[RMDB]
An RNA of 207 nucleotides, treated with 2A3 and read out base by base. Values cover nucleotides 27 to 156.
RNA sequence: GGGAACGACUCGAGUAGAGUCGAAAAGGAAGGACAUUCUGAGGUUGCUAGAGCUUCUAAACAUUAAAUGCUCCUUUAUUGCAUGUGCAGACUGUUCUUCAACACCAUCGAACAACUGGUGGAUUAGUGAAGAUAAAGUUAGGCUUUUAAAAAAUUCCGCCGUUACGAGAUUCGUCUCGUAACGGCGAAAAGAAACAACAACAACAAC
Reactivity to 2A3 in 0.01 (KOAc 150mM, MgCl2 10mM, bicine 150mM(pH8.5), 24C), signal-to-noise 1, nucleotides 027 to 156: g030g000a000a000g010g000a010c010a010u030u000c000u010g060a070g020g200u110u100g000c020u040a030g000a060g020c010u080u020c060u180a060a170a090c060a020u180u150a090a090a160u120g010c000u030c000c030u150u190u210a300u160u190g000c010a000u000g060u200g240c010a000g000a010c000u000g040u000u000c000u000u010c000a020a020c030a010c010c010a070u070c070g170a120a060c040a020a120c070u020g020g000u010g000g080a110u060u190a100g010u040g110a200a030g020a130u100a090a020a000g020u060u040a100g010g120c060u000u180u030u150a060a170a050a000a000a070u160u140c050
The RNA was probed in 150 mM KOAc, 10 mM MgCl2 and 150 mM bicine (pH 8.5) at 24 C.